An RNA of 207 nucleotides, treated with DMS and 2A3 and read out base by base. The DMS profile rests on 9,451 reads. Reactivities are given for positions 27 through 156. It was measured as part of the RMDB library M2RFPK. The RNA was probed in 150 mM KOAc, 10 mM MgCl2 and 150 mM bicine (pH 8.5) at 24 C. DMS adducts were read by reverse transcription with MarathonRT.
RNA sequence: GGGAACGACUCGAGUAGAGUCGAAAAAUACACCAGCAGUAGGACUCAGCGACCGUCACAACAAGGUUGUGCUGGUAUCCGACGGUCGUAUAGCCCUGUCUUGCAGGUUGCCUUGCACGGACGUGCCACACCAUUUACAGAUUCGUCUGUAAAUGAAGUCCUGUAUAUCUUUCGAGAUAUACAGGACAAAAGAAACAACAACAACAAC
Reactivity to DMS in 0.01 (KOAc 150mM, MgCl2 10mM, bicine 150mM(pH8.5), 24C), signal-to-noise 3, nucleotides 027 to 156: a130u010a070c040a160c030c000a100g010c020a060g040u000a020g040g000a070c000u000c090a220g000c000g010a020c000c000g020u010c030a210c090a110a110c150a060a110g010g020u000u000g000u000g020c000u000g020g010u000a030u000c050c020g000a020c030g010g000u000c030g050u000a110u000a030g010c000c010c000u000g030u000c050u000u010g000c030a080g030g010u000u010g000c020c110u000u010g000c030a080c040g010g010a110c110g040u000g000c030c060a110c050a090c100c010a040u000u000u000a010c000a000g010a070u000u000c300g010u000c010u000g040u000a000a010a000u000g000a070a140
Reactivity to 2A3 in 0.01 (KOAc 150mM, MgCl2 10mM, bicine 150mM(pH8.5), 24C), signal-to-noise 7, nucleotides 027 to 156: a000u150a010c070a010c010c000a000g000c000a010g030u150a010g000g020a030c010u020c060a000g000c010g000a000c010c000g000u020c010a060c050a200a160c060a240a140g040g020u020u020g030u040g040c030u030g020g010u020a040u030c020c040g000a000c000g000g000u000c000g010u020a030u040a030g000c000c010c000u020g030u040c060u040u090g010c010a020g030g020u120u150g070c020c020u040u060g010c020a030c070g050g050a030c080g030u050g030c030c010a100c010a020c040c000a000u000u000u010a000c000a000g020a020u020u110c160g090u010c090u000g000u000a010a000a000u020g020a040a020